An RNA of 177 nucleotides, treated with 2A3 and read out base by base. It was measured as part of the RMDB library OK1LIB.

RNA sequence: GGGAACGACUCGAGUAGAGUCGAAAAAUGAUGGGCAAAUACGACCCGAGAGCUACAUGUGGUGGGGAUGGGGAGGAAGGCAUCAUUCCACGUGUAUCGAAUGAUCUAUUUACCAUCCUUGAUAAAAACGUCCAUAGGCCUUCGGGCCUAUGGACGUAAAAGAAACAACAACAACAAC
Reactivity to 2A3 in 0.01 (KOAc 150mM, MgCl2 10mM, bicine 150mM(pH8.5), 24C), signal-to-noise 2, nucleotides 027 to 126: a000u300g000a000u060g000g010g000c070a130a080a080u230a220c250g020a230c000c110c000g010a000g000a000g140c000u020a070c000a120u150g080u020g020g190u270g000g030g040g080a000u070g000g040g000g050a020g020g030a000a070g020g020c020a000u000c000a000u030u040c000c000a160c200g140u030g070u070a140u080c040g010a010a070u000g000a140u070c010u010a030u000u020u150a030c000c000a000u000c000c000u010u010g170a130u300a070a060a010a010
The RNA was probed in 150 mM KOAc, 10 mM MgCl2 and 150 mM bicine (pH 8.5) at 24 C. Reactivities are given for positions 27 through 126. Values are in units of 0.01, from 0 to 300, in steps of 10.